Description
The record gives the reactivity of an RNA of 207 nucleotides to 2A3 and DMS. Values cover nucleotides 27 to 156. Reactivities are rounded to 0.1 and cut off at 0 and 3. DMS adducts were read by reverse transcription with MarathonRT. The RNA was probed in 150 mM KOAc, 10 mM MgCl2 and 150 mM bicine (pH 8.5) at 24 C.

RNA sequence: GGGAACGACUCGAGUAGAGUCGAAAAAGUCACCUAUUACGAUCGGUGACAUUUGAACCAGCGAACAAUUCAGUUGCGAGAUUCGAGGUUUCAGUCUGAAUCAUAGUAGCCAUUACGAUGGCUACAACUCACUCCCGACUGUUCGCAGUCGGGAGAAUCUCUCAACAAUGUUCGCAUUGUUGAGAGAAAAAGAAACAACAACAACAAC
Reactivity to 2A3 in 0.01 (KOAc 150mM, MgCl2 10mM, bicine 150mM(pH8.5), 24C), signal-to-noise 2, nucleotides 027 to 156: a000g000u000c000a000c000c020u030a070u090u110a070c200g110a020u110c030g000g000u000g000a000c000a000u010u010u150g020a010a020c000c000a000g160c000g000a000a000c000a020a080u000u010c000a000g000u010u010g000c000g000a000g000a000u000u000c000g020a030g030g050u140u130u250c020a030g120u070c010u010g000a000a000u080c050a030u020a110g010u000a000g000c000c010a000u010u030a020c240g130a020u010g000g020c000u000a000c000a000a000c010u110c060a130c000u000c000c030c000g000a000c000u000g020u050u080c220g030c130a000g000u000c000g010g020g000a000g000a000a000
Reactivity to DMS in 0.01 (KOAc 150mM, MgCl2 10mM, bicine 150mM(pH8.5), 24C), signal-to-noise 2, nucleotides 027 to 156: a080g000u000c010a050c010c000u010a170u010u000a180c220g030a090u010c120g030g000u010g000a040c020a050u000u000u020g010a140a240c020c000a100g020c010g000a040a050c040a090a120u000u000c030a190g030u000u000g000c020g000a070g010a130u000u000c030g040a200g030g010u000u000u000c060a080g000u000c090u000g000a040a040u010c170a110u050a120g020u000a000g000c000c000a020u010u000a140c180g030a170u000g000g000c000u000a000c000a010a030c140u000c000a170c000u010c000c000c010g000a040c000u020g000u000u000c270g030c000a040g000u000c000g000g000g000a000g010a000a030